Annotation
Structure probing data (2A3 and DMS) for a 170-nucleotide construct. In probing experiments dimethyl sulfate is read out at A N1 and C N3, which are open when not base-paired. For 2A3 the reverse transcriptase was SuperScript II with manganese. High 2A3 reactivity points to a flexible backbone, as in loops and unpaired stretches. For DMS, 16,502 sequencing reads were counted. The RNA was probed in 150 mM KOAc, 10 mM MgCl2 and 150 mM bicine (pH 8.5) at 24 C. For DMS the reverse transcriptase was MarathonRT.
[RMDB]
RNA sequence: GGGAACGACUCGAGUAGAGUCGAAAACAUAGCGAUAGGGGGAGAUGCUGGGAGUUAGAGGAGACCUUAGGGGAGACCGAAGCGAGGAGGAAAGCAAAGAAAGCAACGGGGCUAGCCGGUGGGUGUUAAAGCGUUAACUUCGGUUAACGCAAAAGAAACAACAACAACAAC
Reactivity to 2A3 in 0.01 (KOAc 150mM, MgCl2 10mM, bicine 150mM(pH8.5), 24C), signal-to-noise 4, nucleotides 027 to 129: c030a040u170a020g090c020g130a070u100a080g000g010g010g010g000a040g010a040u120g010c070u040g020g020g000a030g010u030u050a030g000a010g020g010a010g010a040c020c000u020u070a020g000g000g000g000a000g010a010c020c020g020a040a010g030c020g020a020g020g000a000g000g010a050a000a000g030c060a020a030a080g020a030a080a010g020c020a040a030c050g010g030g000g000c010u000a020g030c000c000g030g010u090g040g020g000u060g010u030u140a090a090a020
Reactivity to DMS in 0.01 (KOAc 150mM, MgCl2 10mM, bicine 150mM(pH8.5), 24C), signal-to-noise 5, nucleotides 027 to 129: c070a000u040a070g020c020g000a050u040a050g000g000g050g020g010a060g000a000u030g040c070u020g000g000g000a050g020u040u020a080g010a000g020g030a030g020a050c080c040u020u030a080g000g000g000g000a000g010a050c060c070g030a040a050g030c230g000a040g020g040a020g020g030a040a060a090g030c220a040a100a070g050a040a070a050g050c150a080a100c190g020g040g030g000c080u010a080g020c020c060g000g040u060g000g000g070u070g060u000u000a040a040a090
The data come from the RNA Mapping Database (RMDB), library 15KLIB.